[RMDB]
RNA sequence: GGGAACGACUCGAGUAGAGUCGAAAAGAGGUACAUUGCGAUCUUGGCAAACAGCCACCAAUUGUUUUCCAGUGAGAUUUUCUCCGCGUACCACAGCACGCUUUCUGGCGAUAAGUCAAUGUGCGUUUCCACUUUGCACUGGAAGGUAUGGUACACGCCAACGUAUGAUAUUCGUAUCAUACGUUGGAAAAGAAACAACAACAACAAC
Reactivity to 2A3 in 0.01 (KOAc 150mM, MgCl2 10mM, bicine 150mM(pH8.5), 24C), signal-to-noise 9, nucleotides 027 to 156: g110a020g020g000u040a030c020a080u040u100g030c040g060a070u030c060u100u100g010g000c030a050a120a110c050a080g020c010c020a040c030c020a090a100u090u080g060u040u080u040u000c010c010a010g020u040g060a090g010a140u050u050u100u060c050u010c030c020g010c020g010u010a010c000c010a020c030a040g040c020a010c040g020c040u100u180u160c080u150g030g010c030g140a190u140a300a020g020u030c030a020a050u110g020u020g020c020g000u020u030u000c010c000a040c040u100u110u150g040c070a040c040u000g000g010a010a010g050g030u120a090u170g000g010u020a000c030a000c030g020
Reactivity to DMS in 0.01 (KOAc 150mM, MgCl2 10mM, bicine 150mM(pH8.5), 24C), signal-to-noise 3, nucleotides 027 to 156: g000a100g040g020u000a050c050a150u000u020g010c000g010a080u000c070u000u000g020g010c020a090a070a140c100a170g000c030c050a070c060c030a110a110u000u000g000u000u000u000u000c040c020a160g020u010g020a070g000a210u010u000u000u000c010u000c020c000g020c040g000u000a040c000c020a030c100a140g030c070a140c100g010c020u000u010u010c030u000g030g000c030g020a150u000a050a080g020u000c040a060a060u000g030u010g010c050g020u000u000u010c030c050a140c040u000u000u000g010c060a060c040u000g000g000a050a030g010g050u000a060u000g000g050u000a030c030a030c020g020
Structure probing data (2A3 and DMS) for a 207-nucleotide construct. 2A3 adducts were read by reverse transcription with SuperScript II with manganese. DMS (dimethyl sulfate) methylates the pairing face of unpaired adenines and cytosines. For DMS the reverse transcriptase was MarathonRT. It was measured as part of the RMDB library OK3TST.